RNA sequence: GGGAACGACUCGAGUAGAGUCGAAAAGGGAGAUCUAGGGCCUACUGGGGAGGGAGGGAGCCAAGUCUAGGCAAAUGGAGAAAGUGACAUUUCAGCAAACUUGUUAGCACUUCCAUGGAGCUGUGAAGGCUAAAUAAUAGUUCGCUAUUAUUUAGCCAAAAGAAACAACAACAACAAC
Reactivity to 2A3 in 0.01 (KOAc 150mM, MgCl2 10mM, bicine 150mM(pH8.5), 24C), signal-to-noise 4, nucleotides 027 to 126: g020g020g010a100g000a050u030c050u080a050g030g030g070c060c030u100a130c110u120g040g020g030g060a190g040g040g040a260g040g000g020a000g020c010c010a030a020g040u000c010u040a020g020g000c020a050a030a070u050g020g000a050g040a060a150a030g030u020g030a030c040a090u030u120u090c040a050g030c050a070a090a090c040u060u050g010u060u060a030g040c010a010c030u040u020c000c000a030u060g040g050a060g020c030u020g020u020g140a130a070
Reactivity to DMS in 0.01 (KOAc 150mM, MgCl2 10mM, bicine 150mM(pH8.5), 24C), signal-to-noise 2, nucleotides 027 to 126: g000g010g000a110g030a150u000c060u010a090g000g000g010c090c060u010a120c140u000g000g010g020g010a170g030g000g000a160g010g050g020a300g000c060c060a010a070g000u000c100u000a060g000g030c030a050a080a030u000g010g000a110g010a050a020a040g000u000g020a090c040a050u000u000u020c060a080g020c130a050a080a050c090u000u000g000u000u000a070g000c050a000c030u000u000c030c000a050u010g020g000a110g010c040u000g000u000g020a110a070